Source: RMDB library RFMREP, as collected in RNAgym. Structure probing data (2A3 and DMS) for a 177-nucleotide construct. The 2A3 profile rests on 1,417 reads. For DMS the reverse transcriptase was MarathonRT.
RNA sequence: GGGAACGACUCGAGUAGAGUCGAAAACAGGCGUUUAGUUGAUGUGAGGAUAAAACUUUCACAGAAACUCUUUUGAUGUGUUGACCCUAAAAUUCAGACUACAAUUAUCUGAUCAGCUUCGUAAAUAUCUACAAUACUAGUUCGCUAGUAUUGUAGAAAAAGAAACAACAACAACAAC
Reactivity to 2A3 in 0.01 (KOAc 150mM, MgCl2 10mM, bicine 150mM(pH8.5), 24C), signal-to-noise 3, nucleotides 027 to 126: c000a000g270g000c040g030u020u080u140a000g010u030u040g010a030u010g020u000g010a040g010g000a020u070a140a080a060a040c000u190u300u090c010a010c010a020g050a020a020a000c010u030c020u160u250u210u290g060a110u090g040u010g010u130u080g110a100c000c000c000u010a060a120a040a030u050u030c010a000g030a030c020u040a120c200a140a210u220u120a050u170c010u000g010a040u070c050a000g120c050u130u120c130g030u070a000a120a070u060a040
Reactivity to DMS in 0.01 (KOAc 150mM, MgCl2 10mM, bicine 150mM(pH8.5), 24C), signal-to-noise 4, nucleotides 027 to 126: c030a070g030g030c060g010u000u000u010a030g010u000u000g000a210u000g030u000g000a040g000g000a050u000a090a100a160a240c020u000u000u000c010a000c010a020g000a300a020a020c010u000c060u000u000u030u010g030a100u000g010u000g010u010u010g020a180c020c000c010u010a030a050a040a100u010u010c020a030g030a030c150u010a080c230a110a080u000u010a130u010c020u000g000a010u010c190a090g000c090u000u000c040g000u000a050a050a080u000a070